[RMDB]
RNA sequence: GGGAACGACUCGAGUAGAGUCGAAAAGAUAUGGACGAAGGACUCCAUCGAUCUAACACAGCAGCAGCUGGACUGUGUCGGAAACGACACAGUCCAAGGUGUUAGGGAGGAGCCUUCGUCCUAAGUCCUAAUGAAGCGAGUUCGCUCGCUUCAUUAGAAAAGAAACAACAACAACAAC
Reactivity to DMS in 0.01 (KOAc 150mM, MgCl2 10mM, bicine 150mM(pH8.5), 24C), signal-to-noise 2, nucleotides 027 to 126: g010a040u000a020u020g000g000a040c000g000a020a020g020g010a300c010u000c000c000a300u020c300g020a100u010c000u000a000a000c000a000c000a140g030c100a080g000c210a080g000c080u000g000g010a010c000u000g020u010g000u010c000g000g000a030a010a030c000g030a010c000a000c000a000g010u000c000c000a000a010g030g000u000g000u000u000a000g000g000g000a040g040g010a040g020c000c000u000u010c000g030u000c010c000u000a000a050g000u000c000

Conditions: 150 mM KOAc, 10 mM MgCl2 and 150 mM bicine (pH 8.5), 24 C. Chemical mapping of a 177-nucleotide RNA with DMS. For DMS the reverse transcriptase was MarathonRT. Source: RMDB library TTRINS, as collected in RNAgym. Reactivities are given for positions 27 through 126.